Annotation
The data come from the RNA Mapping Database (RMDB), library OK3TST. Structure probing data (2A3) for a 207-nucleotide construct. 2A3 is a SHAPE reagent: it acylates the 2'-hydroxyl of flexible nucleotides of all four kinds. The 2A3 profile rests on 562 reads. The RNA was probed in 150 mM KOAc, 10 mM MgCl2 and 150 mM bicine (pH 8.5) at 24 C.
[RMDB]
RNA sequence: GGGAACGACUCGAGUAGAGUCGAAAAGAUGGGUCCGAUGGAUUAAUGCGUCGCCAGCCAUUGGAUCCUGAUUGAUAGAUUGAGGGCGACGGUCGGAUCACUCGGUAAUUCGGUGCUCAACGAGUGAUCCGUGAUGAUAGUUAAGAGGAGCACCUAAACUACCACGCGUAUUCGUACGCGUGGUAGUAAAAGAAACAACAACAACAAC
Reactivity to 2A3 in 0.01 (KOAc 150mM, MgCl2 10mM, bicine 150mM(pH8.5), 24C), signal-to-noise 1, nucleotides 027 to 156: g020a100u110g000g000g000u000c000c000g000a000u000g000g010a010u000u170a230a150u300g000c000g000u000c000g000c010c010a000g000c000c000a000u000u000g000g000a000u000c070c000u020g010a010u000u120g000a000u000a080g210a050u040u220g120a040g040g160g000c000g000a000c000g000g000u040c000g010g000a000u000c000a000c000u000c030g020g030u130a070a160u230u120c010g000g000u000g000c000u060c000a000a010c000g000a000g000u000g000a000u000c000c000g000u000g000a000u020g000a000u120a180g150u250u180a150a080g080a050g200g000a010g000c010a000c020c000u000a030a000